[RMDB]
RNA sequence: GGGAACGACUCGAGUAGAGUCGAAAAAUAUAAUCAAAGAAAGGUAGUGUUCAUGUGACUUUACAAUUAGCAUGUAUCUGCAUAGAAUCUGCCUCUGGCUUUACCAGCAAUAGAAUAUUUAUAGAAGAGAAACAGAAAUGCUUUGCUGUUAAUGACAACUAUGAGUACGAUUCGUCGUACUCAUAGUAAAAGAAACAACAACAACAAC
Reactivity to DMS in 0.01 (KOAc 150mM, MgCl2 10mM, bicine 150mM(pH8.5), 24C), signal-to-noise 2, nucleotides 027 to 156: a190u020a050u000a090a090u000c050a050a160a180g000a170a050a040g020g060u000a040g020u030g020u000u000c020a060u000g020u010g000a070c020u010u000u000a060c040a090a220u010u000a120g040c090a090u000g020u000a040u020c010u000g010c020a040u000a100g040a040a050u000c000u000g020c000c000u000c020u020g010g000c060u000u000u010a080c050c000a100g000c050a060a070u010a160g020a110a120u000a060u000u000u000a160u010a180g010a160a130g010a140g000a070a050a110c050a050g000a060a080a100u000g010c000u000u000u010g030c000u000g000u000u000a070a130u000g020a090c070a140
Reactivity to 2A3 in 0.01 (KOAc 150mM, MgCl2 10mM, bicine 150mM(pH8.5), 24C), signal-to-noise 4, nucleotides 027 to 156: a000u080a010u050a020a120u100c070a100a040a020g060a090a110a010g010g000u010a010g020u020g030u090u030c030a040u030g000u020g110a090c060u160u070u090a040c050a090a090u140u090a120g070c050a010u040g000u040a040u010c030u090g000c010a000u010a050g030a010a020u000c000u000g000c000c000u000c030u030g040g000c010u030u030u000a040c030c000a000g000c010a010a040u090a130g020a070a030u070a070u230u180u150a190u150a150g030a090a010g040a010g030a050a160a000c050a040g080a070a050a010u050g000c000u010u040u030g000c010u020g010u040u020a030a020u030g060a020c020a020
The data come from the RNA Mapping Database (RMDB), library OK3TST. An RNA of 207 nucleotides, treated with DMS and 2A3 and read out base by base. Reactivities are rounded to 0.1 and cut off at 0 and 3. Reactivities are given for positions 27 through 156. For DMS, 3,621 sequencing reads were counted. For 2A3, 3,596 sequencing reads were counted. For 2A3 the reverse transcriptase was SuperScript II with manganese.